An RNA of 177 nucleotides, treated with DMS and 2A3 and read out base by base.
RNA sequence: GGGAACGACUCGAGUAGAGUCGAAAACACUAUUGGUUCGCCAAUAGUGAAACGCCAAGCCGAAGCCGAACGGCAAGCCGAAGCCGAACGGCAACGGCAAAAAAACUGCGUUCUUCGGAACGCAGAAGGUUAUAGUAUCCUUCGGGAUACUAUAACCAAAAGAAACAACAACAACAAC
Reactivity to DMS in 0.01 (KOAc 150mM, MgCl2 10mM, bicine 150mM(pH8.5), 24C), signal-to-noise 3, nucleotides 027 to 126: c000a000c000u000a010u000u000g000g000u000u000c300g030c010c020a020a000u000a000g030u000g000a020a070a110c270g020c010c010a050a120g000c000c000g040a020a300g000c020c040g020a070a300c020g020g000c020a050a210g020c120c140g000a070a070g000c010c000g010a020a300c020g010g000c020a000a170c030g010g000c000a010a000a050a090a030a010a080c020u000g000c000g010u000u010c000u000u000c190g010g000a000a000c000g000c000a000g000a060a020
Reactivity to 2A3 in 0.01 (KOAc 150mM, MgCl2 10mM, bicine 150mM(pH8.5), 24C), signal-to-noise 1, nucleotides 027 to 126: c010a000c000u010a010u000u010g030g020u060u060c160g040c120c000a000a000u000a010g010u000g010a030a000a010c080g020c030c020a020a010g030c000c010g020a010a010g000c010c010g000a010a010c000g020g020c040a000a030g160c040c050g080a080a010g000c000c000g010a020a010c010g000g010c000a000a000c000g000g020c020a010a020a030a000a000a000a030c010u000g000c020g010u010u000c000u010u030c080g090g000a000a000c000g000c000a000g010a000a010

Notes: It was measured as part of the RMDB library M2PK50. For DMS, 2,729 sequencing reads were counted.